[RMDB]
RNA sequence: GGGAACGACUCGAGUAGAGUCGAAAAAGUCUGAUUAUCGCAUUAAAUUCAGCAUGAUAUUACAUGAUUUAAUGUGAUAUCAGUGCGAUAUCUUGCAGGACCGAGACGUAGAUUAAAGCGUCUUUAAGAAUAUGUCUUAUUUCGAUAAGACAUAUUCAAAAGAAACAACAACAACAAC
Reactivity to DMS in 0.01 (KOAc 150mM, MgCl2 10mM, bicine 150mM(pH8.5), 24C), signal-to-noise 8, nucleotides 027 to 126: a110g000u010c010u000g000a050u020u020a000u000c000g010c000a010u000u020a030a040a100u050u030c220a120g030c160a100u020g000a080u010a050u010u010a040c040a030u000g000a140u030u030u020a050a000u000g010u000g000a000u000a000u000c000a010g010u030g000c010g010a060u010a040u010c060u000u010g010c070a080g000g010a090c060c070g010a020g010a010c000g010u010a070g010a190u030u030a080a110a150g000c030g000u000c000u010u010u020a070a090
Reactivity to 2A3 in 0.01 (KOAc 150mM, MgCl2 10mM, bicine 150mM(pH8.5), 24C), signal-to-noise 9, nucleotides 027 to 126: a000g050u020c010u010g010a040u060u200a000u020c000g000c000a000u000u080a060a070a070u270u150c070a060g070c040a100u050g040a030u050a050u110u130a050c020a030u030g060a140u120u070u160a060a000u010g000u000g000a000u000a000u000c000a000g010u020g010c010g010a010u010a050u110c060u040u100g020c040a050g040g080a030c010c040g010a010g000a010c010g030u070a030g030a300u120u280a120a080a010g010c010g000u000c000u000u020u010a070a010
Conditions: 150 mM KOAc, 10 mM MgCl2 and 150 mM bicine (pH 8.5), 24 C. This 177-nucleotide RNA was probed chemically with DMS and 2A3. For 2A3, 36,205 sequencing reads were counted.